Conditions: 150 mM KOAc, 10 mM MgCl2 and 150 mM bicine (pH 8.5), 24 C. Chemical mapping of a 177-nucleotide RNA with DMS. DMS adducts were read by reverse transcription with MarathonRT.

RNA sequence: GGGAACGACUCGAGUAGAGUCGAAAAUUCAUCGGGGAUAUGGACAGGACGCGAAGACAGCCGAGUAGGGUCUCGGAAACGAGACAUUACGAUGAGGUCGAGUGUCCUGUCCUAAGUCAUAAGUCAAGUUUCAUGUAGUCUUCGGACUACAUGAAACAAAAGAAACAACAACAACAAC
Reactivity to DMS in 0.01 (KOAc 150mM, MgCl2 10mM, bicine 150mM(pH8.5), 24C), signal-to-noise 3, nucleotides 027 to 126: u000u000c070a070u000c070g020g010g000g000a100u000a260u000g000g010a000c000a010g020g000a020c020g020c010g010a130a230g000a010c100a030g050c010c060g000a300g000u000a000g000g000g000u000c000u000c010g000g000a050a060a110c030g010a020g010a020c000a040u000u000a010c000g010a220u000g000a060g030g030u000c010g030a290g010u000g000u000c010c010u010g000u000c000c000u000a010a060g010u000c090a050u010a080a090g010u010c160a090a130
Source: RMDB library TTRDEL, as collected in RNAgym.